[RMDB]
RNA sequence: GGGAACGACUCGAGUAGAGUCGAAAACGCGGCACAGUCCAAACCGAAGCCUUCGGGCAAUGUGGUGUUCGGACUGACUUUCAUCGUUUGACCGUUCGUGUGAAGUCUCCUGAAACGGAGCGCGAUACACAUUGUAUAAGUUCGCUUAUACAAUGUGAAAAGAAACAACAACAACAAC
Reactivity to 2A3 in 0.01 (KOAc 150mM, MgCl2 10mM, bicine 150mM(pH8.5), 24C), signal-to-noise 9, nucleotides 027 to 126: c020g000c020g040g000c060a010c010a120g000u000c010c000a050a020a000c010c010g030a040a010g020c010c000u050u080c240g060g000g000c020a020a050u230g070u240g050g020u060g110u120u080c090g000g000a000c000u000g010a000c010u070u150u090c050a110u070c030g050u030u040u110g070a070c020c030g030u060u050c040g000u060g030u040g130a060a050g070u030c010u020c010c010u060g050a090a050a030c060g000g010a010g010c030g000c000g010a010u050a070
Reactivity to DMS in 0.01 (KOAc 150mM, MgCl2 10mM, bicine 150mM(pH8.5), 24C), signal-to-noise 9, nucleotides 027 to 126: c030g020c200g010g010c220a180c010a020g000u000c000c000a040a140a020c010c010g010a180a210g000c000c000u000u010c180g030g010g020c000a040a040u010g030u010g010g010u000g010u000u010c190g020g010a020c010u000g000a090c090u000u010u010c090a060u000c040g010u000u000u010g000a130c040c030g010u000u000c020g020u000g010u000g010a110a110g000u010c020u000c010c010u000g010a080a090a080c160g000g000a080g010c160g010c040g010a090u010a240